[RMDB]
RNA sequence: GGGAACGACUCGAGUAGAGUCGAAAACACAAUGUGCGCCAUUAACAUUGUUUAUGCAAGCACGUUUCGCAAUGUACGGCGCAGAAACAUUGCCAAGACAAAUACGCUUCACGAUGUGCGGCACAGAAAAAGCUCGCGCACUUCGGUGCGCGAGCAACUUUUAGUGAUUGUUCGCAAUCACUAAAAGAAAAGAAACAACAACAACAAC
Reactivity to 2A3 in 0.01 (KOAc 150mM, MgCl2 10mM, bicine 150mM(pH8.5), 24C), signal-to-noise 2, nucleotides 027 to 156: c090a010c010a040a060u050g020u050g030c010g010c000c030a080u170u080a080a000c060a030u040u040g020u070u100u110a110u150g070c050a040a120g060c050a020c090g000u020u090u090c050g000c010a020a000u020g000u030a030c070g000g070c050g020c020a000g040a000a050a000c010a010u030u070g030c070c040a110a020g070a060c070a030a120a000u170a120c090g020c010u040u070c040a020c060g060a050u090g050u090g030c000g030g020c040a030c040a080g200a010a130a000a000a000g000c000u000c000g000c020g000c020a000c000u000u050c110g060g000u000g000c010g170c000g000a000g000c000a000a000